[RMDB]
RNA sequence: GGGAACGACUCGAGUAGAGUCGAAAAGAACACACACGUGUUCGUGAGAGUUCGUACGAGAGUUCUCGAUCACGAGAGUGUUCGAGAACACGUUCUCACUCGUACUCACGAGAGUACACACGUUCGUACGUACGAUCACUCUCGAGAGUGUUCGAGAAUUAUUCCGCAACUUCGGUUGCGGAAUAAUAAAAGAAACAACAACAACAAC
Reactivity to DMS in 0.01 (KOAc 150mM, MgCl2 10mM, bicine 150mM(pH8.5), 24C), signal-to-noise 2, nucleotides 027 to 156: g020a040a000c020a040c010a150c070a120c150g010u010g000u000u000c010g000u000g000a110g000a300g020u010u000c060g090u000a110c060g000a110g020a140g010u000u000c000u000c010g010a020u010c030a000c000g010a300g000a300g010u000g010u010u000c000g040a030g000a020a010c010a070c030g010u000u010c020u010c010a130c060u010c110g050u000a060c020u000c050a130c250g000a250g020a070g010u000a110c050a100c080a090c150g020u000u000c030g030u000a070c000g000u000a050c020g000a140u000c120a050c020u000c010u000c000g000a040g010a130g010u000g020u010u000c030g020a180g000a120
Reactivity to 2A3 in 0.01 (KOAc 150mM, MgCl2 10mM, bicine 150mM(pH8.5), 24C), signal-to-noise 3, nucleotides 027 to 156: g010a000a010c010a000c020a010c010a010c110g000u010g040u150u100c070g010u060g010a020g000a010g000u040u040c020g010u030a010c010g010a010g010a010g120u000u020c010u000c000g000a000u000c000a000c000g090a070g000a000g100u010g020u000u010c010g000a010g000a000a000c030a010c020g030u030u030c070u010c050a040c030u080c050g010u040a060c030u030c080a080c110g200a200g010a010g150u050a010c040a000c020a000c100g070u070u040c020g000u040a040c000g020u020a010c000g010a000u020c040a000c020u060c000u020c020g070a080g010a010g050u030g040u020u020c020g010a040g080a120